[RMDB]
RNA sequence: GGGAACGACUCGAGUAGAGUCGAAAAGAACCGCGAUUCGUCGCGGUUCGAGCGCCGUAGCGCGCAACGGCGUAACGCCAGCAUUAGCGCGCAGCUGCCGACGAUCGGGUGGUUUCGACCACCCGAAUUGUCGGUACCAAUUCGUUGGUACCGACAAAAAAGAAACAACAACAACAAC
Reactivity to 2A3 in 0.01 (KOAc 150mM, MgCl2 10mM, bicine 150mM(pH8.5), 24C), signal-to-noise 3, nucleotides 027 to 126: g000a000a000c010c000g000c010g010a000u020u060c190g020u020c010g110c000g010g000u010u000c000g010a000g000c030g000c000c000g040u050a060g010c010g020c000g000c020a030a000c030g010g010c010g040u090a120a030c090g080c040c000a020g040c050a180u090u170a040g010c000g030c030g000c020a010g020c020u100g050c030c020g080a120c050g050a100u030c000g000g000g000u010g010g000u000u020u180c160g070a020c000c000a020c000c000c000g010a000a010
Reactivity to DMS in 0.01 (KOAc 150mM, MgCl2 10mM, bicine 150mM(pH8.5), 24C), signal-to-noise 9, nucleotides 027 to 126: g000a010a010c000c000g020c000g000a030u000u010c180g020u000c000g030c000g010g000u000u000c000g000a110g010c030g000c010c030g020u000a070g010c020g010c000g010c010a060a030c040g000g000c000g020u000a100a090c160g000c020c010a110g010c150a110u000u000a100g010c010g020c010g020c020a180g000c110u000g010c070c040g010a090c130g000a120u000c010g000g000g020u000g000g000u000u000u010c160g010a030c000c000a010c000c000c000g000a000a010

This 177-nucleotide RNA was probed chemically with 2A3 and DMS. Source: RMDB library M2PK50, as collected in RNAgym. 2A3 adducts were read by reverse transcription with SuperScript II with manganese. The RNA was probed in 150 mM KOAc, 10 mM MgCl2 and 150 mM bicine (pH 8.5) at 24 C. For DMS the reverse transcriptase was MarathonRT.